This 177-nucleotide RNA was probed chemically with 2A3 and DMS. For DMS, 1,382 sequencing reads were counted. Reactivities are given for positions 27 through 126. The reactions ran in a buffer of 150 mM KOAc, 10 mM MgCl2 and 150 mM bicine (pH 8.5), at 24 C. 2A3 adducts were read by reverse transcription with SuperScript II with manganese.
RNA sequence: GGGAACGACUCGAGUAGAGUCGAAAAGAUAUGGAGAUAGCUACCCACCUCCCGGACACGAAGAACCAAGAUUGGUCGGAAACGACCAAUCUUGGGGAGUGUCCAGGGAGAGGCUAUCUCCUAAGUCGAUCUUCAUUAACUUCGGUUAAUGAAGAUCAAAAGAAACAACAACAACAAC
Reactivity to 2A3 in 0.01 (KOAc 150mM, MgCl2 10mM, bicine 150mM(pH8.5), 24C), signal-to-noise 2, nucleotides 027 to 126: g140a070u300a210u300g020g000a000g010a010u000a000g010c030u170a300c000c010c040a030c020c000u000c000c000c010g010g030a010c000a000c000g300a300a110g030a110a020c020c000a000a000g000a020u000u000g010g000u000c000g020g060a080a150a050c020g040a010c010c000a000a010u000c010u000u020g000g000g000g000a020g020u010g010u000c000c000a000g020g000g000a020g000a020g010g010c010u000a010u000c000u000c000c000u000a020a010g240u170c100
Reactivity to DMS in 0.01 (KOAc 150mM, MgCl2 10mM, bicine 150mM(pH8.5), 24C), signal-to-noise 2, nucleotides 027 to 126: g040a120u010a120u000g030g010a000g020a030u000a010g030c010u010a220c050c000c030a300c120c000u000c020c000c000g030g010a010c000a010c000g010a150a200g000a250a170c040c010a020a020g000a010u010u010g000g000u010c010g010g000a130a090a250c010g060a020c000c000a030a000u000c000u000u000g000g000g020g010a060g010u000g000u010c010c000a030g000g000g030a000g010a020g040g000c010u000a000u010c000u000c000c000u000a020a040g000u010c110